[RMDB]
RNA sequence: GGGAACGACUCGAGUAGAGUCGAAAAGAUAUGGAUUCCUUGUCAGUCCCACCGUCCGGUUUGAAGUAUUCGGAAACGAAUAUACUUCGGCUGGACGGUGGGACUUGGAUUUAGGAAUCCUAAGUCACAAUGAAUCAAUCUUCGGAUUGAUUCAUUGAAAAGAAACAACAACAACAAC
Reactivity to DMS in 0.01 (KOAc 150mM, MgCl2 10mM, bicine 150mM(pH8.5), 24C), signal-to-noise 3, nucleotides 027 to 126: g010a040u000a300u000g000g010a010u000u000c010c000u000u000g010u000c010a050g000u000c000c010c000a010c000c000g030u000c000c000g010g020u000u000u010g030a000a010g020u000a050u000u000c000g010g000a150a090a260c000g020a030a030u010a140u010a060c010u000u000c000g000g000c000u000g000g000a000c000g000g000u000g000g000g000a000c000u000u000g010g000a030u000u010u000a010g010g010a030a010u000c000c000u000a010a110g010u010c020a300
Reactivity to 2A3 in 0.01 (KOAc 150mM, MgCl2 10mM, bicine 150mM(pH8.5), 24C), signal-to-noise 1, nucleotides 027 to 126: g000a010u110a110u150g010g010a010u020u010c000c010u000u010g030u000c000a010g020u030c000c020c000a000c000c000g000u020c020c010g030g200u080u140u300g060a000a010g010u020a000u000u020c010g040g070a030a050a050c010g000a070a000u240a040u070a110c010u020u010c020g000g010c030u000g060g000a010c010g000g000u010g000g020g020a010c000u000u010g010g000a000u020u030u040a000g000g000a010a000u010c000c010u010a050a040g050u030c030a000

The record gives the reactivity of an RNA of 177 nucleotides to DMS and 2A3. It was measured as part of the RMDB library TTRINS. The DMS profile rests on 7,297 reads. High 2A3 reactivity points to a flexible backbone, as in loops and unpaired stretches. The RNA was probed in 150 mM KOAc, 10 mM MgCl2 and 150 mM bicine (pH 8.5) at 24 C. For DMS the reverse transcriptase was MarathonRT. For 2A3 the reverse transcriptase was SuperScript II with manganese.